[RMDB]
RNA sequence: GGGAACGACUCGAGUAGAGUCGAAAACGUCGCGUGUUCGCACGCGACGAAACGAGAAACGGCAAAAAAGCCGAUCCCAGGCGAUCGUACGCCAUACUCAAAAAAGUCCCUGCUUCGGCAGGGACAAGGUGCAUUAUAUCUUCGGAUAUAAUGCACCAAAAGAAACAACAACAACAAC
Reactivity to DMS in 0.01 (KOAc 150mM, MgCl2 10mM, bicine 150mM(pH8.5), 24C), signal-to-noise 2, nucleotides 027 to 126: c010g000u010c000g010c010g020u010g040u000u020c120g030c020a010c000g040c000g000a010c000g010a010a030a060c140g000a040g020a060a070a210c140g020g010c000a000a110a240a100a100a110g000c000c010g000a050u000c000c000c020a230g000g010c030g000a070u000c220g000u000a220c050g030c050c030a130u000a090c080u030c050a000a040a080a070a150a100g000u000c000c000c000u000g000c000u000u000c240g030g020c010a000g010g000g010a000c000a000a010
Reactivity to 2A3 in 0.01 (KOAc 150mM, MgCl2 10mM, bicine 150mM(pH8.5), 24C), signal-to-noise 2, nucleotides 027 to 126: c020g000u020c000g000c020g010u020g000u050u050c170g040c110a010c000g010c000g000a000c010g000a010a010a000c020g000a010g010a050a120a030c050g010g000c080a030a200a050a170a170a060g000c030c000g010a030u050c000c000c010a020g020g000c010g020a070u210c120g070u140a050c040g010c000c020a050u080a070c030u060c070a050a080a080a010a000a020g000u000c000c000c000u000g000c000u040u030c240g110g000c010a000g000g000g000a000c000a000a000